[RMDB]
RNA sequence: GGGAACGACUCGAGUAGAGUCGAAAAGCUUAAUAACGUGCGCUGAGCCCUUCUCCCCCAGCUUGCCUGUGUCCUAGGGAAUUGGAAGGUCAUCCUUCACAGGAUCGUGUGGAAGUCCUGCUCGGGGUCCAAACAUGGUAAUUCGUUACCAUGUUAAUGUGUAAACAUUAUUCGUAAUGUUUACACAAAAAGAAACAACAACAACAAC
Reactivity to 2A3 in 0.01 (KOAc 150mM, MgCl2 10mM, bicine 150mM(pH8.5), 24C), signal-to-noise 4, nucleotides 027 to 156: g030c020u100u110a090a030u150a200a070c060g100u140g050c070g040c060u080g040a040g020c000c010c000u120u020c130u050c010c000c000c000c000a010g000c000u040u090g050c010c040u040g000u000g030u050c010c060u040a030g000g030g090a050a110u130u110g050g010a030a020g030g030u060c020a110u150c010c000u040u030c020a030c000a070g040g000a040u020c030g030u070g020u030g110g030a060a020g030u040c000c010u010g000c010u000c030g000g000g020g000u020c030c010a050a010a000c000a000u000g000g010u010a030a030u060u020c090g020u020u000a000c000c000a000u000g000u010u010a020a030
Reactivity to DMS in 0.01 (KOAc 150mM, MgCl2 10mM, bicine 150mM(pH8.5), 24C), signal-to-noise 4, nucleotides 027 to 156: g030c040u010u000a070a100u010a060a110c090g030u000g010c070g010c060u000g000a110g000c020c020c030u010u000c040u000c040c020c010c020c030a120g030c020u000u000g020c030c020u010g050u000g010u010c050c030u000a130g020g020g010a090a120u000u010g050g020a070a060g020g020u000c090a130u000c030c000u000u000c080a080c040a060g000g000a050u000c060g020u000g010u000g020g000a090a100g000u000c030c020u010g000c040u000c060g010g030g050g020u000c030c060a100a060a010c000a000u010g000g020u000a010a070u000u010c300g030u000u000a010c000c000a000u000g020u000u000a020a080